Source: RMDB library OK2TST, as collected in RNAgym. This 177-nucleotide RNA was probed chemically with DMS and 2A3.
RNA sequence: GGGAACGACUCGAGUAGAGUCGAAAAGAAUUUUCUACACCUAUGAUGGUAAUAGUUGACCCUACAACUUCUCUCAAACUCGUAAAGCCAUACGCAGCAGCACAGGGUGCAGCAAGUAGCUGCGAAAGCAGCACGGUAAUUUCGAUUACCGUGCUGCAAAAGAAACAACAACAACAAC
Reactivity to DMS in 0.01 (KOAc 150mM, MgCl2 10mM, bicine 150mM(pH8.5), 24C), signal-to-noise 3, nucleotides 027 to 126: g000a090a100u000u000u000u000c030u010a100c120a040c020c020u000a140u010g000a110u010g010g010u000a070a100u000a050g000u000u010g000a100c030c020c020u000a110c090a030a070c040u000u010c040u000c020u000c050a050a050a090c080u000c050g020u010a060a060a180g000c020c040a050u000a080c060g040c060a020g040c030a120g010c020a060c060a080g000g010g010u010g000c040a030g000c070a060a090g010u010a140g030c000u000g010c000g010a050a080a090
Reactivity to 2A3 in 0.01 (KOAc 150mM, MgCl2 10mM, bicine 150mM(pH8.5), 24C), signal-to-noise 2, nucleotides 027 to 126: g000a030a040u090u050u050u030c020u030a060c010a070c060c000u080a130u190g090a040u120g030g040u060a070a060u060a140g030u040u040g080a060c000c000c030u060a040c020a050a030c000u070u050c030u000c000u000c060a060a070a110c040u030c040g090u110a160a030a020g030c000c010a030u040a080c030g000c010a030g000c000a000g000c000a020c010a060g110g020g100u050g000c000a000g000c000a020a160g150u090a040g090c000u020g000c000g020a040a000a000